[RMDB]
RNA sequence: GGGAACGACUCGAGUAGAGUCGAAAAGAACUGCGUGAAGGAAUCUUCAGUGAUCUCCUCGGGGCGUAGUGUUCCGACUGCGGAUCGACGAGCGAUCUCACGGACGGCAUCGACGAUUUCUGCGCGGGAUCCAUGCUCUGUUCGCAGAGCAUGGAUCAAAAGAAACAACAACAACAAC
Reactivity to 2A3 in 0.01 (KOAc 150mM, MgCl2 10mM, bicine 150mM(pH8.5), 24C), signal-to-noise 1, nucleotides 027 to 126: g040a100a020c030u040g020c020g000u160g120a110a050g010g000a010a050u040c040u090u040c100a250g100u030g070a100u000c030u010c070c010u010c050g020g010g020g010c040g060u150a100g050u020g000u120u000c000c030g020a050c120u090g010c060g030g010a030u020c020g080a060c040g100a060g090c020g040a120u000c000u040c040a060c000g000g040a030c050g030g040c030a110u020c060g000a030c010g000a010u010u110u000c000u030g010c040g000c030g000g000
Reactivity to DMS in 0.01 (KOAc 150mM, MgCl2 10mM, bicine 150mM(pH8.5), 24C), signal-to-noise 1, nucleotides 027 to 126: g020a150a160c020u000g000c010g000u000g000a140a030g000g000a040a030u000c000u000u000c200a090g040u000g000a100u010c090u030c000c020u010c120g000g040g000g000c010g030u000a040g010u000g030u030u000c020c000g000a120c150u010g040c100g010g010a020u000c040g020a150c160g000a050g000c070g000a030u010c000u000c050a120c190g010g020a030c120g020g000c020a080u000c000g020a100c060g010a040u000u000u000c010u010g020c030g000c080g000g010